[RMDB]
RNA sequence: GGGAACGACUCGAGUAGAGUCGAAAAGUCAUUUGAGGGACGAAUCCGCCCCCGGGCGCUCCCCUCGGACUUCCUCCAGGAGGGUUCACAUCCCCAACCCGCGGGCCGGCUACUCUUCUUUCCCUUCCAAGGCUUUUGUUCGCAAAAGCCAAAAGAAACAACAACAACAAC
Reactivity to 2A3 in 0.01 (KOAc 150mM, MgCl2 10mM, bicine 150mM(pH8.5), 24C), signal-to-noise 4, nucleotides 027 to 129: g020u020c030a130u040u000u300g030a000g010g010g010a010c070g050a040a020u030c060c020g020c010c020c030c010c030g070g020g010c020g000c030u030c000c000c000c000u000c020g010g000a000c020u040u010c010c000u050c020c010a040g090g000a040g040g060g020u090u130c050a050c030a190u090c010c010c000c000a020a040c010c000c020g020c050g000g010g000c030c020g010g000c010u040a030c020u020c010u110u000c010u000u040u020c000c000c030u020u050c020c010a060a000
Reactivity to DMS in 0.01 (KOAc 150mM, MgCl2 10mM, bicine 150mM(pH8.5), 24C), signal-to-noise 5, nucleotides 027 to 129: g000u000c000a090u050u050u000g010a040g030g000g010a120c130g020a040a020u050c140c020g020c040c040c030c110c250g020g010g010c050g010c170u010c010c000c000c000u010c000g010g030a030c070u000u000c040c040u050c020c020a080g000g000a050g070g000g000u000u010c080a080c180a200u040c000c000c000c000a110a110c000c070c050g040c130g020g010g040c070c060g020g020c130u040a050c010u000c030u000u000c030u000u000u000c010c000c020u030u020c000c000a040a100
Structure probing data (2A3 and DMS) for a 170-nucleotide construct. DMS adducts were read by reverse transcription with MarathonRT. For DMS, 22,649 sequencing reads were counted. Source: RMDB library 15KLIB, as collected in RNAgym. For 2A3 the reverse transcriptase was SuperScript II with manganese.